[RMDB]
RNA sequence: GGGAACGACUCGAGUAGAGUCGAAAAGACUGCGUGCACUAGAGACGAUAUCGAGCCGGAAAUUAAUCGAUAAUGUCUCGUGUAGUGGAUACGAUCCGGCAAGUAUCGACUACCUGUGCUCGUAGGAAUCCGAUUACUGAUUCGUCAGUAAUCGGAUAAAAGAAACAACAACAACAAC
Reactivity to DMS in 0.01 (KOAc 150mM, MgCl2 10mM, bicine 150mM(pH8.5), 24C), signal-to-noise 4, nucleotides 027 to 126: g000a170c000u000g010c000g000u010g000c000a010c020u020a130g010a020g000a010c000g000a160u000a010u000c010g030a080g010c000c000g010g000a120a120a100u040u040a080a160u000c000g020a030u000a020a060u000g000u000c010u000c020g000u020g000u000a000g020u010g000g000a010u000a010c020g010a130u000c010c000g000g000c000a110a140g000u000a000u000c020g000a040c000u010a010c000c300u030g000u000g010c010u000c000g010u000a000g010g000a090
Reactivity to 2A3 in 0.01 (KOAc 150mM, MgCl2 10mM, bicine 150mM(pH8.5), 24C), signal-to-noise 9, nucleotides 027 to 126: g060a010c010u000g000c000g000u020g000c000a000c010u030a010g000a000g000a010c010g030a030u010a000u080c000g000a010g000c000c010g030g110a080a120a100u300u260a090a170u130c000g010a010u020a050a070u150g010u000c010u010c020g010u050g010u020a010g000u010g120g010a000u000a010c010g010a020u010c000c000g000g000c050a070a020g000u000a000u010c020g050a010c000u020a050c000c030u020g000u000g000c000u000c000g000u000a010g000g020a000
Background: The record gives the reactivity of an RNA of 177 nucleotides to DMS and 2A3. For 2A3 the reverse transcriptase was SuperScript II with manganese. The reactions ran in a buffer of 150 mM KOAc, 10 mM MgCl2 and 150 mM bicine (pH 8.5), at 24 C. For DMS the reverse transcriptase was MarathonRT. The data come from the RNA Mapping Database (RMDB), library OK1LIB.